An RNA of 170 nucleotides, treated with 2A3 and DMS and read out base by base. For 2A3 the reverse transcriptase was SuperScript II with manganese.
[RMDB]
RNA sequence: GGGAACGACUCGAGUAGAGUCGAAAAAUGGUCUUUCUGGCCUUCCGGAGGUCUCUCUCGAGCUCCUCUGCCUUUCUUCUUGUGGAGAUCCACUUUUCGAGGAUUUCUUCCCUUCCUCCCCUCCGGCUCAGUCCUUCCUUCGGGAAGGACAAAAGAAACAACAACAACAAC
Reactivity to 2A3 in 0.01 (KOAc 150mM, MgCl2 10mM, bicine 150mM(pH8.5), 24C), signal-to-noise 5, nucleotides 027 to 129: a000u140g010g010u040c000u010u180u070c110u120g030g000c000c000u050u010c030c000g010g010a110g000g040u030c020u000c000u000c000u010c040g000a000g000c010u040c020c010u050c020u030g020c000c000u030u080u060c010u070u010c010u090u220g030u050g020g020a050g010a050u050c020c010a050c050u040u100u090u110c050g020a070g000g050a050u110u020u000c030u010u020c010c000c000u020u040c000c010u010c000c000c000c010u000c000c000g020g000c030u030c080a020
Reactivity to DMS in 0.01 (KOAc 150mM, MgCl2 10mM, bicine 150mM(pH8.5), 24C), signal-to-noise 4, nucleotides 027 to 129: a040u030g040g010u010c040u000u000u000c160u060g010g020c040c030u030u040c080c040g050g000a140g040g010u030c030u010c050u030c050u030c080g030a060g020c040u020c030c000u020c070u000g000c040c040u030u020u050c000u010u000c070u000u000g020u050g020g000a090g010a150u020c010c010a070c030u040u020u010u050c090g030a110g000g000a120u000u000u000c070u030u040c010c030c010u010u040c030c050u020c000c010c010c040u020c000c000g050g000c080u020c090a100